[RMDB]
RNA sequence: GGGAACGACUCGAGUAGAGUCGAAAAUUGGAUCUAUGGAAGAUGAACUACUGCGAAAGCAUUUACCAAGGAUGUUUUCAUUAAUCAAGAACGAAAGUUAGGGGAUCGAAGAGGAUCAGAUACCCUCGCUACACUAAAGGUUCGCCUUUAGUGUAGCAAAAGAAACAACAACAACAAC
Reactivity to DMS in 0.01 (KOAc 150mM, MgCl2 10mM, bicine 150mM(pH8.5), 24C), signal-to-noise 2, nucleotides 027 to 126: u000u010g000g000a040u000c020u000a120u010g010g010a160a100g010a040u010g010a190a110c080u010a060c130u040g030c190g000a080a080a030g000c000a010u000u030u000a200c150c190a090a150g000g000a010u000g010u000u000u000u000c010a030u010u010a070a110u000c030a070a080g000a110a030c120g010a040a060a050g000u000u010a030g000g000g000g000a060u010c090g010a040a100g020a030g000g000a080u010c050a040g010a120u040a070c060c010c010u000c120
Reactivity to 2A3 in 0.01 (KOAc 150mM, MgCl2 10mM, bicine 150mM(pH8.5), 24C), signal-to-noise 2, nucleotides 027 to 126: u030u080g050g000a000u020c010u060a130u130g080g080a050a070g010a090u060g030a070a020c000u080a010c020u150g010c060g010a000a000a000g000c020a010u010u050u050a140c070c030a070a070g100g000a020u010g010u000u000u030u000c010a000u020u170a050a120u110c050a040a040g060a110a030c100g020a100a020a100g010u090u120a040g000g000g000g040a010u020c020g010a040a000g090a060g070g000a040u070c010a000g000a080u080a110c020c000c030u000c030
An RNA of 177 nucleotides, treated with DMS and 2A3 and read out base by base. For 2A3, 2,134 sequencing reads were counted. 2A3 adducts were read by reverse transcription with SuperScript II with manganese. The reactions ran in a buffer of 150 mM KOAc, 10 mM MgCl2 and 150 mM bicine (pH 8.5), at 24 C. The data come from the RNA Mapping Database (RMDB), library RFMREP.